[RMDB]
RNA sequence: GGGAACGACUCGAGUAGAGUCGAAAAGGCUAGCCGACGGGUGUUCCGCCUCCCGAGAGGGGACGAGUGAGGCUUAUCCCGGGGAACCCGGCGAAUCGUCCCCACAUAGCAGCUCCCGGACCCCCUUGACCACUUCACUUCGGUGAAGUGAAAAGAAACAACAACAACAAC
Reactivity to DMS in 0.01 (KOAc 150mM, MgCl2 10mM, bicine 150mM(pH8.5), 24C), signal-to-noise 7, nucleotides 027 to 129: g010g000c050u000a080g040c070c030g020a160c040g020g020g030u020g030u040u000c080c080g030c060c000u000c000c000c040g030a140g010a070g020g030g000g030a000c020g020a030g000u030g000a100g020g020c130u000u030a160u020c200c010c020g000g000g000g000a100a070c050c040c010g050g000c000g020a080a080u020c010g000u010c000c000c000c000a020c080a090u030a070g030c020a000g030c080u020c010c000c010g020g020a230c010c000c010c000c000u030u020g030a160c160
Reactivity to 2A3 in 0.01 (KOAc 150mM, MgCl2 10mM, bicine 150mM(pH8.5), 24C), signal-to-noise 9, nucleotides 027 to 129: g050g010c030u050a020g000c010c010g060a080c050g020g010g000u060g050u180u120c050c020g020c020c000u060c000c000c010g030a030g030a020g020g000g010g010a010c010g000a030g120u220g050a020g060g020c010u020u060a090u110c000c000c000g010g000g010g020a060a060c060c000c000g010g020c060g040a020a070u020c010g010u000c010c000c020c000a020c010a010u060a000g010c030a000g020c010u020c010c000c000g020g050a070c000c000c000c000c040u040u080g050a050c030
The record gives the reactivity of an RNA of 170 nucleotides to DMS and 2A3. The 2A3 profile rests on 31,824 reads. Values cover nucleotides 27 to 129. For DMS the reverse transcriptase was MarathonRT. For DMS, 45,199 sequencing reads were counted.